[RMDB]
RNA sequence: GGGAACGACUCGAGUAGAGUCGAAAAACAGCGAAAGGCACAAGACUUCGAACAUUAUAGCAGUUAGUAGUUGCCUAAACCCAUUGCAAUAUAUGGGACAGUAGAGGUCGCAAGCCUGUACUGUGCGAAAAGUCGCAAGGUUUCGACCUUGCGACAAUACCCAUUCUUCUUUCGAGAAGAAUGGGUAAAAAGAAACAACAACAACAAC
Reactivity to 2A3 in 0.01 (KOAc 150mM, MgCl2 10mM, bicine 150mM(pH8.5), 24C), signal-to-noise 4, nucleotides 027 to 156: a000c020a000g020c010g080a210a050a030g020g050c000a020c030a080a080g040a050c020u040u050c080g110a110a040c020a140u200u180a160u270a140g070c050a010g010u030u140a000g020u080a040g010u100u060g010c000c000u050a090a020a020c000c000c000a010u010u000g010c020a040a010u010a000u000a010u180g000g030g000a000c010a000g000u020a020g000a000g040g000u080c030g010c110a030a020g010c010c000u000g000u000a010c000u000g000u000g030c010g050a060a010a030a070g010u000c000g000c000a000a000g040g020u030u060u090c140g060a070c000c000u010u000g000c000g000a000c000a000a000
Reactivity to DMS in 0.01 (KOAc 150mM, MgCl2 10mM, bicine 150mM(pH8.5), 24C), signal-to-noise 2, nucleotides 027 to 156: a050c050a140g020c030g010a120a040a070g000g040c000a120c110a120a200g000a070c000u000u000c020g020a090a080c060a140u000u000a140u010a140g000c050a060g010u010u020a120g020u000a100g030u000u000g010c010c030u000a070a080a170c000c000c000a050u000u000g000c100a150a180u010a140u000a010u010g020g000g000a080c020a050g010u000a040g000a040g040g010u000c060g000c300a090a300g000c030c000u000g020u000a010c020u000g000u000g020c040g000a090a040a050a190g010u000c010g010c000a020a000g000g010u000u000u010c260g010a060c000c000u000u000g010c000g010a010c020a020a050